[RMDB]
RNA sequence: GGGAACGACUCGAGUAGAGUCGAAAAGAUAUGGAGCACAUUAGGGAGCUUGUCGGAAACGACAAAGCUUUGAUCUAGGGUGCUCCUAAGUCAAACAUGCCUUUGAGGUUCGCCUCAAAGGCAUGAACAUAGUUACGUAGUUCGCUACGUAACUAUGAAAAGAAACAACAACAACAAC
Reactivity to DMS in 0.01 (KOAc 150mM, MgCl2 10mM, bicine 150mM(pH8.5), 24C), signal-to-noise 9, nucleotides 027 to 126: g010a020u000a230u010g000g000a010g010c000a010c000a040u010u000a010g010g010g000a000g010c000u000u000g000u000c000g000g000a050a050a090c000g010a010c000a020a030a060g010c000u000u000u010g010a060u010c000u000a010g010g010g020u000g000c000u000c000c000u000a000a060g010u000c020a150a120a300c010a000u000g000c000c000u000u000u000g000a010g000g010u000u010c250g010c000c000u000c000a000a000a000g000g000c000a000u000g000a060a170
Reactivity to 2A3 in 0.01 (KOAc 150mM, MgCl2 10mM, bicine 150mM(pH8.5), 24C), signal-to-noise 4, nucleotides 027 to 126: g030a000u050a010u110g000g010a000g010c010a010c020a040u000u030a070g200g250g000a000g000c010u010u000g000u000c010g010g010a060a020a020c000g010a000c070a050a080a010g010c000u120u070u160g140a110u090c010u010a010g040g020g000u000g010c000u000c000c000u010a000a010g000u010c010a040a080a070c010a000u010g000c000c000u010u000u000g000a000g050g030u110u190c300g130c070c010u000c000a000a000a000g000g000c010a000u000g000a000a000